[RMDB]
Structure probing data (DMS and 2A3) for a 177-nucleotide construct.
The RNA was probed in 150 mM KOAc, 10 mM MgCl2 and 150 mM bicine (pH 8.5) at 24 C.
Reactivities are given for positions 27 through 126.
It was measured as part of the RMDB library OK2TST.
For DMS the reverse transcriptase was MarathonRT.
RNA sequence: GGGAACGACUCGAGUAGAGUCGAAAAUUCGCGAGGAGAACGGGGACUGCUACCUCGAUGUCGUGUUCAAGCACGACUACGAGCACGCCAAGCACAUCCUCGUCUGGUGUAACCCGUUCCUCAGGCCAGUGUUGAGAGUGUUCGCACUCUCAACACUAAAAGAAACAACAACAACAAC
Reactivity to DMS in 0.01 (KOAc 150mM, MgCl2 10mM, bicine 150mM(pH8.5), 24C), signal-to-noise 3, nucleotides 027 to 126: u010u000c010g090c100g000a040g030g020a120g000a120a030c080g010g000g000g000a120c300u020g020c010u010a130c230c020u000c000g020a300u000g000u010c000g070u000g000u010u020c300a220a140g010c000a000c030g020a020c000u030a290c000g010a000g000c160a080c120g020c060c170a080a070g060c030a050c170a230u000c000c040u020c030g020u000c040u020g000g010u000g000u030a040a090c000c010c000g010u000u000c000c000u000c070a100g000g020c090c120
Reactivity to 2A3 in 0.01 (KOAc 150mM, MgCl2 10mM, bicine 150mM(pH8.5), 24C), signal-to-noise 2, nucleotides 027 to 126: u100u070c030g000c110g010a020g000g040a040g030a110a020c020g000g000g030g060a030c030u050g040c030u070a080c030c010u000c010g020a040u040g010u000c030g000u010g000u050u240c180a160a000g060c010a010c010g000a010c040u050a090c000g010a000g000c100a010c120g050c020c070a100a010g040c050a010c010a060u080c010c000u050c020g010u000c000u030g010g050u020g020u000a070a080c030c010c000g010u000u010c020c020u030c030a000g090g060c030c040